RNA sequence: GGGAACGACUCGAGUAGAGUCGAAAAGCAUAUGACAUUAUGACAAGCCUGAUUUAGCAUCUGGAAAGAGACCUAGAGGCAUAAUUGGUUAAUAAGCUAAAGAAGAAUCAAUAGUGGAAUGUGGCUGUCAAAAGAGAAAGUUAGGCUGGGCGCGGUAUCGGUGAUAAUCAUUCGUGAUUAUCACCGAAAAAGAAACAACAACAACAAC
Reactivity to DMS in 0.01 (KOAc 150mM, MgCl2 10mM, bicine 150mM(pH8.5), 24C), signal-to-noise 2, nucleotides 027 to 156: g000c040a140u000a080u000g000a110c060a070u000u000a110u010g030a140c040a080a170g000c000c020u000g010a150u010u000u010a090g010c040a150u000c020u000g010g010a080a150a120g000a180g010a060c100c010u000a090g000a110g010g000c030a080u000a070a120u020u010g020g010u000u010a060a100u000a090a050g030c050u000a040a080a110g000a100a120g020a040a090u000c020a050a060u000a020g000u000g020g000a060a080u000g030u000g010g030c020u000g000u010c070a050a050a050a110g000a080g000a080a050a020g010u000u030a030g040g000c010u000g000g000g000c030g040c020g050g000u000a120
Reactivity to 2A3 in 0.01 (KOAc 150mM, MgCl2 10mM, bicine 150mM(pH8.5), 24C), signal-to-noise 4, nucleotides 027 to 156: g010c020a050u050a070u130g080a090c050a050u090u130a060u120g070a040c040a060a050g020c010c030u060g090a110u050u040u090a030g010c030a050u040c030u050g050g050a130a070a030g050a030g000a030c010c000u030a020g000a040g100g030c020a010u080a040a080u130u060g020g010u050u050a110a050u120a160a040g020c030u050a040a040a060g060a060a040g030a060a030u070c030a020a110u050a100g040u070g040g030a060a060u070g020u050g090g000c010u020g020u050c000a040a070a050a010g050a010g010a050a040a000g030u070u050a020g040g020c020u020g000g000g010c020g000c020g060g000u030a030